[RMDB]
RNA sequence: GGGAACGACUCGAGUAGAGUCGAAAAGAUAUGGAGAACGAACUACAUCGUACACAACGAAGAACGGAUGUUUAAGUCGGAAACGACUUAAACAUCCGGGAGUUGUGGCGAUGCGUUCUCCUAAGUCCGUGUGGUAAAGGUUCGCCUUUACCACACGAAAAGAAACAACAACAACAAC
Reactivity to 2A3 in 0.01 (KOAc 150mM, MgCl2 10mM, bicine 150mM(pH8.5), 24C), signal-to-noise 2, nucleotides 027 to 126: g030a070u100a050u180g000g010a000g000a050a010c010g030a070a040c050u180a040c300a000u000c010g110u300a300c030a020c000a000a040c030g300a300a200g080a300a110c050g030g000a000u000g000u040u010u000a000a020g010u010c020g000g040a120a090a000c030g000a000c010u000u010a020a000a000c010a000u000c000c000g000g000g000a030g000u010u000g010u000g020g000c000g000a000u020g000c000g000u000u000c000u010c010c000u010a010a030g030u050c020
Reactivity to DMS in 0.01 (KOAc 150mM, MgCl2 10mM, bicine 150mM(pH8.5), 24C), signal-to-noise 2, nucleotides 027 to 126: g020a100u010a300u000g020g020a000g020a000a020c020g010a100a080c110u030a300c010a010u000c000g020u000a200c010a000c000a000a010c000g000a160a150g000a160a220c010g000g000a020u000g000u000u000u000a010a010g010u000c000g030g000a110a050a280c010g020a020c000u000u000a000a000a000c000a000u000c010c000g010g000g010a060g010u000u000g000u000g000g000c000g020a010u010g000c010g040u000u000c000u000c000c000u000a000a070g000u000c020